[RMDB]
RNA sequence: GGGAACGACUCGAGUAGAGUCGAAAAUGGCCUGAUCACCCAUGGCGUGCCUUUAUUGGCACUUUGGUUUUGGUUUGAAUUGCUUGACAGGAUUGGUCUUGGGAACUUGCCUACUCCAUUUGAGUGGAUUGUGUUAGCGGUUCGCCGCUAACACAAUAAAAGAAACAACAACAACAAC
Reactivity to DMS in 0.01 (KOAc 150mM, MgCl2 10mM, bicine 150mM(pH8.5), 24C), signal-to-noise 1, nucleotides 027 to 126: u010g010g030c020c030u000g000a050u020c050a100c300c000c040a050u010g010g040c230g030u000g010c020c010u000u000u020a140u030u000g000g030c010a000c010u000u000u010g010g000u020u030u010u000g030g010u020u000u020g010a100a110u010u010g000c060u000u000g000a060c050a070g020g010a100u000u000g010g010u010c030u000u000g030g000g010a070a070c080u000u010g000c070c010u000a100c090u010c010c080a160u000u010u000g050a080g030u000g000g000
Structure probing data (DMS) for a 177-nucleotide construct. Reactivities are given for positions 27 through 126. The reactions ran in a buffer of 150 mM KOAc, 10 mM MgCl2 and 150 mM bicine (pH 8.5), at 24 C.